This 177-nucleotide RNA was probed chemically with 2A3 and DMS. It was measured as part of the RMDB library OK2TST. The DMS profile rests on 4,609 reads. 2A3 adducts were read by reverse transcription with SuperScript II with manganese. The RNA was probed in 150 mM KOAc, 10 mM MgCl2 and 150 mM bicine (pH 8.5) at 24 C.
RNA sequence: GGGAACGACUCGAGUAGAGUCGAAAAGGGCCCAGACAAGUGCUCAGGGGAUGCCAAUGUGACAGGUCUGUGGACCACUCUGAGUGACAAGGUUAUAGAACUCCAGGUUCUGCAUAAGUAGGUAUGCCUUGAAUGCAGAUUUCGAUCUGCAUUCAAGAAAAGAAACAACAACAACAAC
Reactivity to 2A3 in 0.01 (KOAc 150mM, MgCl2 10mM, bicine 150mM(pH8.5), 24C), signal-to-noise 3, nucleotides 027 to 126: g050g000g010c000c000c010a000g050a030c040a040a120g040u020g090c000u010c020a010g000g020g030g030a030u130g020c020c050a130a130u190g060u120g100a070c060a100g000g030u000c020u100g110u220g080g020a010c020c000a030c000u020c010u010g020a030g000u080g020a020c000a020a100g070g000u100u070a100u030a180g050a030a040c020u000c070c050a070g140g020u060u000c020u030g000c000a030u040a120a090g070u090a020g090g070u050a030u090g040c000
Reactivity to DMS in 0.01 (KOAc 150mM, MgCl2 10mM, bicine 150mM(pH8.5), 24C), signal-to-noise 5, nucleotides 027 to 126: g000g000g000c020c010c020a140g000a080c080a080a250g010u000g010c020u020c020a040g020g010g020g000a160u000g010c020c020a150a140u010g010u010g010a050c070a100g040g000u010c020u000g020u000g030g010a030c040c040a170c040u010c010u000g000a040g010u000g010a040c050a070a130g010g000u010u000a110u000a080g000a040a070c020u000c090c140a120g010g020u000u000c010u000g000c030a030u010a030a120g020u010a060g000g000u000a030u000g000c050